[RMDB]
RNA sequence: GGGAACGACUCGAGUAGAGUCGAAAAGCGUCGAACGUGAGUUCGACGCACGUGGUAUCGUGAGAUACCACGACGCUUCACUUCGGUGAAGCGAGUUGCACGUACGCGUGCAACACCGACGCUACGGCGUCGGAGAACCGCGUGAGCGGUUCAAGCAAUUCUUCGGAAUUGCAGGUAUCGGUGACGAUACCACUUCCGCGUGAGCGGAAGAACAUAAGACAUAAAAAAAAAAGGACCGUCAGAGGACACGGUUAAAAAGUCCUCUAACACUACCAUUCGUGGUAGUGAAAAGAAACAACAACAACAAC
Reactivity to 2A3 in 0.01 (KOAc 150mM, MgCl2 10mM, bicine 150mM(pH8.5), 24C), signal-to-noise 3, nucleotides 027 to 266: g000c000g000u000c000g000a010a010c030g040u100g100a130g030u040u000c000g000a000c000g010c000a010c010g000u000g000g000u000a000u010c020g010u020g030a080g000a010u000a000c000c000a000c000g000a010c010g000c000u000u010c000a010c020u040u090c180g120g000u000g000a000a000g000c000g000a070g000u000u010g010c010a000c000g010u050a020c290g010c000g130u020g000c000a000a010c000a000c010c000g010a000c000g010c010u040a030c280g140g010c010g010u000c010g020g000a030g010a000a010c000c000g010c030g080u140g050a060g010c010g010g010u000u010c000a000a020g000c010a000a000u010u000c000u050u140c160g070g020a000a000u000u000g000c020a030g010g000u000a000u000c010g010g120u110g070a040c020g000a000u000a000c010c010a020c000u020u000c000c010g000c010g060u100g160a060g000c000g030g000a010a010g000a010a010c030a050u200a060a050g130a030c100a040u210a080a100a030a050a060a030a030a060a040a110g140g060a040c000c020g010u020c020a020g010a010g010g000a010c000a000c010g020g030u040u050a000a000a000a000a010g010u000c000c000u000c010u000a000a000